An RNA of 177 nucleotides, treated with 2A3 and read out base by base.
Source: RMDB library OK1LIB, as collected in RNAgym.
Values cover nucleotides 27 to 126.

RNA sequence: GGGAACGACUCGAGUAGAGUCGAAAAGUCGGGAAGUAGCAACGGUAGUUCGCGGUUUACCUUUUCCGAACACCUGGUCACUUUUAAAGUGAAAGGCGGGUUGCUCGUCUUCUGGUUUUCGGCCAGAGCAGCGGGAGGUUUUCGAACCUCCCGCUGCAAAAGAAACAACAACAACAAC
Reactivity to 2A3 in 0.01 (KOAc 150mM, MgCl2 10mM, bicine 150mM(pH8.5), 24C), signal-to-noise 1, nucleotides 027 to 126: g080u000c040g020g020g010a010a010g020u070a020g130c110a010a010c020g000g180u170a050g000u250u080c050g000c020g000g020u020u000u090a130c000c000u020u020u020u020c060c000g000a100a010c000a010c190c000u130g000g070u040c000a110c070u040u160u120u300a210a300a000g000u070g180a100a050a120g030g070c000g070g000g000u090u100g000c040u050c000g020u000c000u080u000c020u000g120g160u040u000u040u290c080g050g060c040c000a040g010a040